An RNA of 207 nucleotides, treated with 2A3 and DMS and read out base by base. For 2A3 the reverse transcriptase was SuperScript II with manganese. For DMS the reverse transcriptase was MarathonRT. The DMS profile rests on 10,350 reads. The RNA was probed in 150 mM KOAc, 10 mM MgCl2 and 150 mM bicine (pH 8.5) at 24 C. For 2A3, 8,462 sequencing reads were counted.
[RMDB]
RNA sequence: GGGAACGACUCGAGUAGAGUCGAAAAAGUGAUUUUAAUCUAGACAAACCAGUCAAAAUAACCAUAACAUCACUUAUUGAUCCAAAAUUUUGAUCAACGGAACAAGUUACCCUAGGGAUAACAGCGCAAUCCUGUUCUAGAGUUCCUAUCGACAAUAGUGUACAUUAAUGUUCGCAUUAAUGUACACAAAAGAAACAACAACAACAAC
Reactivity to 2A3 in 0.01 (KOAc 150mM, MgCl2 10mM, bicine 150mM(pH8.5), 24C), signal-to-noise 8, nucleotides 027 to 156: a000g030u020g010a020u030u030u080u140a090a080u050c110u110a050g010a030c030a020a180a080c050c050a040g020u010c000a030a040a040a070u130a040a040c070c040a040u050a100a050c020a020u010c010a000c010u030u040a040u050u130g020a030u020c040c040a040a060a110a220u110u160u070u110g040a050u020c010a020a050c050g010g010a010a010c020a080a070g060u090u090a100c030c010c020u060a060g000g000g050a050u070a100a050c030a040g060c050g000c120a020a040u070c010c010u030g040u070u000c030u040a040g000a010g060u010u010c010c000u030a070u100c070g060a050c040a080a090u080a180
Reactivity to DMS in 0.01 (KOAc 150mM, MgCl2 10mM, bicine 150mM(pH8.5), 24C), signal-to-noise 4, nucleotides 027 to 156: a090g030u000g010a060u010u010u000u000a060a150u000c040u000a140g030a140c030a100a130a090c080c040a140g000u000c040a050a050a090a070u000a090a140c090c060a110u000a090a120c090a070u010c020a050c040u000u010a140u000u000g000a050u000c030c080a040a090a100a150u000u000u000u010g000a040u000c030a030a080c080g030g020a030a070c040a050a170g000u000u000a060c010c000c000u000a070g020g020g030a070u010a020a050c030a090g040c070g040c060a100a060u000c070c040u000g030u000u000c030u010a070g000a110g000u000u000c030c030u010a110u000c080g000a070c070a070a100u000a170